[RMDB]
Source information:
Structure probing data (2A3 and DMS) for a 177-nucleotide construct. Source: RMDB library OK2TRN, as collected in RNAgym. For DMS the reverse transcriptase was MarathonRT. High 2A3 reactivity points to a flexible backbone, as in loops and unpaired stretches. The RNA was probed in 150 mM KOAc, 10 mM MgCl2 and 150 mM bicine (pH 8.5) at 24 C. 2A3 adducts were read by reverse transcription with SuperScript II with manganese. For DMS, 1,156 sequencing reads were counted. For 2A3, 1,331 sequencing reads were counted.

RNA sequence: GGGAACGACUCGAGUAGAGUCGAAAACUUCCGCACGGAUACGACCGGAGACGGUAACCAUCUGCUUCACCUCUGGCUCAAUGACAGCGACAUUGCCUGGAUAGAGAGUCAGACGACUUUUGCGGCCCACUCAAUCGACGUUCGCGUCGAUUGAGUGAAAAGAAACAACAACAACAAC
Reactivity to 2A3 in 0.01 (KOAc 150mM, MgCl2 10mM, bicine 150mM(pH8.5), 24C), signal-to-noise 1, nucleotides 027 to 126: c010u110u000c010c020g040c000a020c000g000g010a020u090a100c050g030a030c060c000g000g000a060g020a080c020g020g000u020a060a110c020c000a050u000c020u020g040c050u080u100c060a060c100c020u000c020u040g000g010c000u030c000a060a040u160g010a010c000a000g040c040g000a080c090a300u070u270g000c010c020u000g000g040a040u060a080g090a010g000a000g020u030c020a040g030a030c020g040a030c010u130u100u110u060g000c040g030g010c030c020
Reactivity to DMS in 0.01 (KOAc 150mM, MgCl2 10mM, bicine 150mM(pH8.5), 24C), signal-to-noise 2, nucleotides 027 to 126: c160u000u010c000c000g000c020a130c020g010g000a050u010a060c300g000a090c010c020g000g000a210g000a180c030g000g000u000a020a100c130c040a040u000c020u000g010c130u010u000c160a130c120c080u000c000u020g000g000c000u020c020a040a200u000g000a150c050a020g000c010g060a270c260a120u010u000g000c160c020u000g000g080a140u000a060g000a300g000a010g000u010c010a020g000a040c180g010a040c290u000u010u000u000g010c020g000g020c070c030